Description
An RNA of 177 nucleotides, treated with DMS and 2A3 and read out base by base. For 2A3 the reverse transcriptase was SuperScript II with manganese. Conditions: 150 mM KOAc, 10 mM MgCl2 and 150 mM bicine (pH 8.5), 24 C.

RNA sequence: GGGAACGACUCGAGUAGAGUCGAAAAGAGCGUCGAGAGACGAAGAGAAGUGCAUCGAUCCACAACGGAGAACGUAAUAAUGCACACAUGUGGAUUAGUGUCCGGAACAACGGGCACAAGAGGCAGAGCCGACCUAUUAUUUCGAUAAUAGGUCGGCAAAAGAAACAACAACAACAAC
Reactivity to DMS in 0.01 (KOAc 150mM, MgCl2 10mM, bicine 150mM(pH8.5), 24C), signal-to-noise 5, nucleotides 027 to 126: g000a120g000c010g000u000c000g000a250g000a220g010a030c010g010a050a090g000a110g000a100a120g000u000g010c020a000u010c040g000a050u000c030c010a020c080a070a100c170g010g000a100g000a100a100c090g020u000a110a090u050a070a080u020g000c090a070c040a070c090a070u010g010u010g010g010a060u010u000a080g000u000g010u000c000c000g000g000a150a160c300a130a120c020g010g000g040c000a000c000a040a040g010a060g010g000c050a060g000a190
Reactivity to 2A3 in 0.01 (KOAc 150mM, MgCl2 10mM, bicine 150mM(pH8.5), 24C), signal-to-noise 4, nucleotides 027 to 126: g060a000g030c020g000u000c010g010a050g000a000g000a060c030g010a080a010g060a000g010a160a030g020u020g040c000a010u060c070g040a050u000c000c010a030c020a150a030c120g080g020a130g030a180a010c010g060u010a050a090u070a150a040u290g050c020a030c010a010c010a110u080g030u040g130g000a020u020u070a040g000u000g010u000c000c010g030g000a100a050c050a040a050c040g000g000g000c000a000c000a000a010g050a020g050g040c050a020g010a020